Chemical mapping of a 177-nucleotide RNA with DMS and 2A3. The data come from the RNA Mapping Database (RMDB), library OK2TRN. 2A3 adducts were read by reverse transcription with SuperScript II with manganese. The DMS profile rests on 1,984 reads. The 2A3 profile rests on 2,338 reads.

RNA sequence: GGGAACGACUCGAGUAGAGUCGAAAACUAGGUACCAUGCGAUCAGACCAUGUCUAGUACACAUGUAUCUCUAGCACAUGCUAGCGUAUCUAGGAUCAGUCUAUCGAUCGGUACUGAUCGCUAGGUAUCAGAGCUCUACAUUCGUGUAGAGCUCUGAAAAAGAAACAACAACAACAAC
Reactivity to DMS in 0.01 (KOAc 150mM, MgCl2 10mM, bicine 150mM(pH8.5), 24C), signal-to-noise 3, nucleotides 027 to 126: c020u000a080g010g020u000a010c020c020a200u000g000c020g040a050u000c010a010g000a050c070c020a070u010g010u000c010u000a100g000u020a070c220a060c080a100u010g020u000a120u000c090u000c010u000a030g000c060a150c220a120u010g000c020u000a000g010c300g000u010a040u000c020u000a050g000g000a010u000c030a090g020u000c140u020a090u020c120g010a030u000c100g000g040u000a120c000u000g010a000u000c010g020c000u000a130g000g000u000a020
Reactivity to 2A3 in 0.01 (KOAc 150mM, MgCl2 10mM, bicine 150mM(pH8.5), 24C), signal-to-noise 3, nucleotides 027 to 126: c030u050a060g010g050u010a020c010c010a040u050g000c020g000a010u020c020a010g020a020c020c000a080u100g030u070c010u030a070g070u150a040c060a010c000a080u170g090u190a060u060c080u000c010u060a010g010c050a080c040a230u300g000c010u010a010g030c010g070u060a020u030c020u020a030g000g030a010u020c000a010g140u020c050u170a170u200c090g030a030u020c030g010g060u190a300c010u000g000a000u010c000g000c010u010a050g010g010u000a010